[RMDB]
RNA sequence: GGGAACGACUCGAGUAGAGUCGAAAAGAUAUGGAAUCCCGUAAGGCGAUAAGAUGGUGUCGGAAACGACACUCAUCUUUUGACGCCUGAAGGGAUUCCUAAGUCAAACAGGCGGUUCGCCGCCUGAGAAGAAGUGGAAGUUCGCUUCCACUUCUUCAAAAGAAACAACAACAACAAC
Reactivity to 2A3 in 0.01 (KOAc 150mM, MgCl2 10mM, bicine 150mM(pH8.5), 24C), signal-to-noise 2, nucleotides 027 to 126: g020a000u070a030u130g000g000a010a010u030c020c010c000g010u070a010a000g040g000c010g030a070u020a130a010g000a010u010g010g020u000g000u020c010g040g050a080a070a010c010g000a000c010a000c000u000c020a010u000c010u000u000u010u040g020a030c030g010c000c010u000g000a010a000g000g000g000a000u000u000c000c000u000a000a000g030u000c000a090a090a110c010a020g000g000c020g040g070u070u180c300g080c120c000g000c010c000u010g000a100
Reactivity to DMS in 0.01 (KOAc 150mM, MgCl2 10mM, bicine 150mM(pH8.5), 24C), signal-to-noise 6, nucleotides 027 to 126: g010a040u010a300u020g000g010a010a000u010c000c010c000g000u020a300a050g010g020c000g000a150u000a010a000g000a010u000g000g010u000g010u000c000g010g000a140a090a180c010g010a010c000a000c000u020c020a010u000c000u000u000u000u010g000a240c080g030c010c000u000g010a100a300g010g000g000a000u000u000c000c010u000a050a080g000u000c040a100a080a260c010a020g000g010c000g020g000u000u010c300g030c000c000g010c000c000u000g000a090